[RMDB]
RNA sequence: GGGAACGACUCGAGUAGAGUCGAAAAAACAAGUUCAGCACCGUAACGGCCGUGGCCGCGGCCAGCCUGAACAACAACGUCGUAGUUUCCCAGAAACCGAUUCUGACCCCGGCAAAUACCUCGGCAACUAUAUACCGUACUUCGGUACGGUAUAUAGAAAAGAAACAACAACAACAAC
Reactivity to DMS in 0.01 (KOAc 150mM, MgCl2 10mM, bicine 150mM(pH8.5), 24C), signal-to-noise 5, nucleotides 027 to 126: a060a040c110a100a100g000u010u000c010a040g010c060a150c110c090g010u020a150a140c140g010g000c010c030g000u000g000g000c070c080g020c050g000g010c010c020a080g020c130c010u000g020a010a020c020a110a080c120a080a060c130g000u000c080g030u000a080g000u000u000u000c010c000c000a180g000a040a130a090c090c040g000a050u000u010c040u000g000a120c040c020c030c030g000g000c070a050a080a110u000a060c050c050u010c030g010g000c100a080a230
Reactivity to 2A3 in 0.01 (KOAc 150mM, MgCl2 10mM, bicine 150mM(pH8.5), 24C), signal-to-noise 3, nucleotides 027 to 126: a000a000c130a070a000g000u030u010c020a010g020c030a020c070c090g130u100a130a060c100g000g000c010c010g060u090g140g050c030c030g000c020g000g020c010c000a000g010c010c010u010g020a000a000c020a000a010c030a010a030c050g070u080c020g000u030a050g070u050u010u020c020c010c000a000g060a050a030a010c050c030g070a070u100u080c040u080g110a110c020c010c000c010g020g000c000a040a090a060u090a060c010c030u010c000g040g010c010a030a020